Overview: Structure probing data (DMS and 2A3) for a 177-nucleotide construct. For DMS, 6,275 sequencing reads were counted. For 2A3 the reverse transcriptase was SuperScript II with manganese. Values cover nucleotides 27 to 126. Source: RMDB library TTRDES, as collected in RNAgym. DMS adducts were read by reverse transcription with MarathonRT. The RNA was probed in 150 mM KOAc, 10 mM MgCl2 and 150 mM bicine (pH 8.5) at 24 C. For 2A3, 17,257 sequencing reads were counted.
[RMDB]
RNA sequence: GGGAACGACUCGAGUAGAGUCGAAAAGAUAUGGAGCAUGUGGAACUACUUCGGCGUGUCGGAAACGACACCGCUCGUGGAAGCCACCGCUGCUCCUAAGUCAAAGCACAAAACUUCGGUUUUGUGCGCAACGUAUCAGGUUCGCCUGAUACGUUGCAAAAGAAACAACAACAACAAC
Reactivity to DMS in 0.01 (KOAc 150mM, MgCl2 10mM, bicine 150mM(pH8.5), 24C), signal-to-noise 5, nucleotides 027 to 126: g010a070u000a300u010g000g000a020g010c000a000u020g020u010g000g020a170a160c040u000a120c020u010u000c110g020g020c020g030u000g010u000c000g010g000a140a120a190c000g010a010c000a000c100c150g040c010u000c120g030u000g010g010a150a110g000c000c010a020c000c010g000c010u000g020c010u000c000c010u000a000a040g010u000c040a130a150a230g010c000a000c000a000a010a010a010c000u000u020c240g030g000u000u000u000u000g000u000g000c000
Reactivity to 2A3 in 0.01 (KOAc 150mM, MgCl2 10mM, bicine 150mM(pH8.5), 24C), signal-to-noise 5, nucleotides 027 to 126: g040a010u080a060u180g000g000a000g000c020a040u160g020u020g020g060a170a260c040u160a060c020u150u100c070g010g000c000g010u010g010u010c000g020g040a090a080a080c010g000a000c010a020c040c070g010c040u300c040g010u030g000g050a090a000g030c000c010a010c000c000g010c020u000g000c000u010c000c000u010a060a000g000u010c050a190a150a000g000c000a010c000a010a020a010a010c010u070u170c270g110g000u010u010u020u020g010u010g000c000